RNA sequence: GGGAACGACUCGAGUAGAGUCGAAAAUAACGCCCGUGCCGAUCUCAAAUCCCGCUUUUCUCAGCCAUUUGGCGCUGAUUUUGAUCACCGGCGUGUCGCUGCGGUUGGGCAGAUAACCCACGGUACAGCUCGGAUGUUUGUUCGCAAACAUCCGAGCAAAAGAAACAACAACAACAAC
Reactivity to DMS in 0.01 (KOAc 150mM, MgCl2 10mM, bicine 150mM(pH8.5), 24C), signal-to-noise 1, nucleotides 027 to 126: u070a190a100c070g000c070c000c030g030u000g010c070c000g000a010u000c000u000c160a100a210a010u030c030c120c040g040c000u010u000u000u010c070u000c040a160g000c100c040a120u000u050u040g010g000c080g010c040u000g030a000u000u000u070u030g000a060u040c050a100c000c080g000g040c000g000u000g010u000c000g010c040u000g000c000g000g010u000u000g000g000g000c040a040g000a110u000a150a090c010c000c000a120c080g030g000u060a020c160a180
Reactivity to 2A3 in 0.01 (KOAc 150mM, MgCl2 10mM, bicine 150mM(pH8.5), 24C), signal-to-noise 2, nucleotides 027 to 126: u100a070a020c050g000c040c000c000g030u010g020c020c040g090a110u050c050u050c080a130a000a030u020c000c000c000g010c020u020u010u110u000c050u010c040a000g000c000c010a120u130u180u240g080g000c030g000c000u000g060a050u010u010u020u190g080a060u090c000a020c000c000g010g030c050g010u030g010u020c030g000c000u010g010c010g040g000u100u000g030g000g060c000a000g000a040u070a070a140c000c000c000a010c000g080g040u110a030c050a020
Conditions: 150 mM KOAc, 10 mM MgCl2 and 150 mM bicine (pH 8.5), 24 C.
An RNA of 177 nucleotides, treated with DMS and 2A3 and read out base by base.
For 2A3, 1,053 sequencing reads were counted.